[RMDB]
RNA sequence: GGGAACGACUCGAGUAGAGUCGAAAAGAUAUGGACUCGGACUAUCAACAGCGUUUAUUCGGAAACGAAUACUGACGACAUGAUAGGCCCGAGUCCUAAGUCAAACUCCGAUGUUCGCAUCGGAGAACUGUCGUAUUACGUUCGCGUAAUACGACAGAAAAGAAACAACAACAACAAC
Reactivity to 2A3 in 0.01 (KOAc 150mM, MgCl2 10mM, bicine 150mM(pH8.5), 24C), signal-to-noise 1, nucleotides 027 to 126: g050a020u110a070u130g000g010a000c000u020c000g000g010a020c010u000a010u010c020a050a130c090a200g080c020g040u040u000u050a020u020u020c020g020g020a060a090a060c020g000a020a030u050a060c150u190g050a010c020g070a070c020a110u220g010a010u000a020g000g000c020c010c000g020a000g000u000c000c000u010a010a000g010u020c010a040a010a070c010u000c000c000g000a010u000g070u060u180c300g000c140a020u010c000g020g000a010g000a000a030
Reactivity to DMS in 0.01 (KOAc 150mM, MgCl2 10mM, bicine 150mM(pH8.5), 24C), signal-to-noise 3, nucleotides 027 to 126: g000a040u000a300u020g020g000a030c000u000c010g000g000a300c000u000a000u000c000a040a120c300a200g000c020g000u000u000u010a000u000u010c000g000g000a170a130a190c000g020a000a000u000a010c300u000g000a000c030g010a060c080a130u000g000a020u000a000g000g000c200c000c020g000a010g010u010c000c000u000a000a120g000u000c030a090a110a180c000u000c010c000g020a010u000g000u000u000c280g010c000a000u000c000g000g000a010g010a000a140
This 177-nucleotide RNA was probed chemically with 2A3 and DMS. For 2A3 the reverse transcriptase was SuperScript II with manganese. 2A3 is a SHAPE reagent: it acylates the 2'-hydroxyl of flexible nucleotides of all four kinds. For DMS the reverse transcriptase was MarathonRT. The reactions ran in a buffer of 150 mM KOAc, 10 mM MgCl2 and 150 mM bicine (pH 8.5), at 24 C. It was measured as part of the RMDB library TTRDES. High DMS reactivity at an A or C suggests that its Watson-Crick edge is free. Reactivities are rounded to 0.1 and cut off at 0 and 3.